[RMDB]
RNA sequence: GGGAACGACUCGAGUAGAGUCGAAAAAAUGGCCGCCCAGCUCGAAGAAAUGAUCGGCGCGCCCGACGCGCUCGACGCCGAGCACCUCGCGCCAGAUCUCGGCGAGCGCCGUCUCGAGCUCGCCGUAACGGUAGGCAUCAUUCGUGAUGCCUACCGUAAAAGAAACAACAACAACAAC
Reactivity to DMS in 0.01 (KOAc 150mM, MgCl2 10mM, bicine 150mM(pH8.5), 24C), signal-to-noise 1, nucleotides 027 to 126: a080a070u000g000g000c000c090g010c060c030c050a180g000c000u000c100g010a100a110g010a150a130a130u020g000a090u000c010g010g020c000g020c090g000c110c000c050g020a070c100g020c050g000c020u010c040g000a130c110g000c090c000g010a060g000c080a070c120c040u010c040g000c090g000c030c010a060g000a070u000c110u000c000g010g060c000g000a040g010c020g030c100c080g000u020c070u000c020g000a120g000c020u000c000g010c000c000g010u000a020
Reactivity to 2A3 in 0.01 (KOAc 150mM, MgCl2 10mM, bicine 150mM(pH8.5), 24C), signal-to-noise 1, nucleotides 027 to 126: a020a030u070g040g010c020c000g020c020c000c000a020g010c020u000c040g300a270a290g020a140a230a110u240g090a170u040c010g030g000c000g020c000g010c000c120c000g020a110c030g000c000g000c030u110c040g100a080c050g070c000c000g020a000g030c010a000c000c030u070c070g050c040g050c060c020a070g000a130u070c080u040c010g070g020c010g000a010g000c030g090c010c090g130u070c040u040c100g040a020g000c010u000c000g000c000c010g010u010a030
Record summary:
The record gives the reactivity of an RNA of 177 nucleotides to DMS and 2A3. For DMS the reverse transcriptase was MarathonRT. The RNA was probed in 150 mM KOAc, 10 mM MgCl2 and 150 mM bicine (pH 8.5) at 24 C. As a SHAPE reagent, 2A3 marks flexible, mostly unpaired nucleotides at the ribose 2'-OH.